[RMDB]
RNA sequence: GGGAACGACUCGAGUAGAGUCGAAAAAAAAAAGAUAUGGAGCUAGCAAGGCUCCCAGUGGACUAUAGGCUCGGAAACGAGCCUACGAAUCCACGGGAGCUGAUGACCUAGCUCCUAAGUCAAAAAACAUUAUAUGGUUCUUCGGAACCAUAUAAUGAAAAGAAACAACAACAACAAC
Reactivity to DMS in 0.01 (KOAc 150mM, MgCl2 10mM, bicine 150mM(pH8.5), 24C), signal-to-noise 2, nucleotides 027 to 126: a000a030a100a100a210a000g010a030u020a300u010g000g020a020g000c000u010a010g000c040a100a090g000g010c000u000c000c000c010a030g120u000g030g000a030c060u010a170u000a000g010g020c000u020c010g000g000a050a080a190c010g000a010g000c000c000u010a000c030g050a110a120u020c000c000a010c020g010g010g000a020g020c000u000g000a020u020g010a060c300c000u000a000g000c000u000c000c030u000a000a060g000u010c040a010a040a060a080a070a170